An RNA of 177 nucleotides, treated with 2A3 and DMS and read out base by base. High DMS reactivity at an A or C suggests that its Watson-Crick edge is free. Reactivities are given for positions 27 through 126. The data come from the RNA Mapping Database (RMDB), library TTRDEL.

[RMDB]
RNA sequence: GGGAACGACUCGAGUAGAGUCGAAAAGAUAUGGAUAUUUCAACAGCGUGACCUCGGAAACGAGGUUCACGACAUGAAAUGAUCCUAAGUCAAAACGUUUCCAGAGAGUUCGCUCUCUGGAAACGAACUUAAAGGGUAGGUUCGCCUACCCUUUAAGAAAAGAAACAACAACAACAAC
Reactivity to 2A3 in 0.01 (KOAc 150mM, MgCl2 10mM, bicine 150mM(pH8.5), 24C), signal-to-noise 1, nucleotides 027 to 126: g010a010u030a000u040g000g000a000u000a000u010u040u000c100a110a070c100a200g130c020g000u000g020a000c000c030u010c000g000g000a010a010a010c010g010a010g030g030u010u030c010a000c000g050a000c010a010u010g010a000a000a010u160g140a020u000c000c000u000a050a040g020u020c020a010a030a090a280c010g000u000u020u000c020c010a000g010a000g010a020g030u110u290c300g010c120u000c000u060c000u000g020g000a020a010a000c000g000a010a000
Reactivity to DMS in 0.01 (KOAc 150mM, MgCl2 10mM, bicine 150mM(pH8.5), 24C), signal-to-noise 6, nucleotides 027 to 126: g010a020u000a170u000g000g010a020u000a030u000u000u000c000a020a200c280a140g010c010g020u000g000a020c000c000u000c000g010g000a040a040a100c000g020a010g000g000u000u000c000a000c000g010a070c110a130u000g000a000a000a000u000g010a020u000c000c000u010a020a120g000u000c020a100a090a130a200c010g000u000u000u000c000c010a010g000a020g000a010g020u000u020c270g010c000u000c000u010c000u010g000g000a000a000a000c010g000a020a050